[RMDB]
RNA sequence: GGGAACGACUCGAGUAGAGUCGAAAAAGCAUAUUUAACCUCUCAAAAGAAUAUUACUUGCUUGAUAGUUUCUCACGACUCUUCAUUUUUGGACCACGUGUGUACUGACAUCAUUCAUUAUGAAGGAACUCGUACUACGGUUCGCCGUAGUACGAGUAAAAGAAACAACAACAACAAC
Reactivity to DMS in 0.01 (KOAc 150mM, MgCl2 10mM, bicine 150mM(pH8.5), 24C), signal-to-noise 1, nucleotides 027 to 126: a010g060c060a050u020a060u030u010u010a040a120c080c020u020c040u060c110a110a060a070a090g000a080a080u000a050u000u000a090c080u000u000g020c050u000u000g000a140u010a120g010u000u000u000c070u000c020a160c180g020a050c080u000c000u000u000c040a090u000u020u030u000u020g020g020a050c050c020a020c220g010u000g030u000g010u020a060c080u050g020a020c020a040u020c020a110u040u040c050a050u000u000a040u000g010a040a040g000g020a110
This 177-nucleotide RNA was probed chemically with DMS. Source: RMDB library OK2TST, as collected in RNAgym. The DMS profile rests on 616 reads. The RNA was probed in 150 mM KOAc, 10 mM MgCl2 and 150 mM bicine (pH 8.5) at 24 C. Values are in units of 0.01, from 0 to 300, in steps of 10. Values cover nucleotides 27 to 126.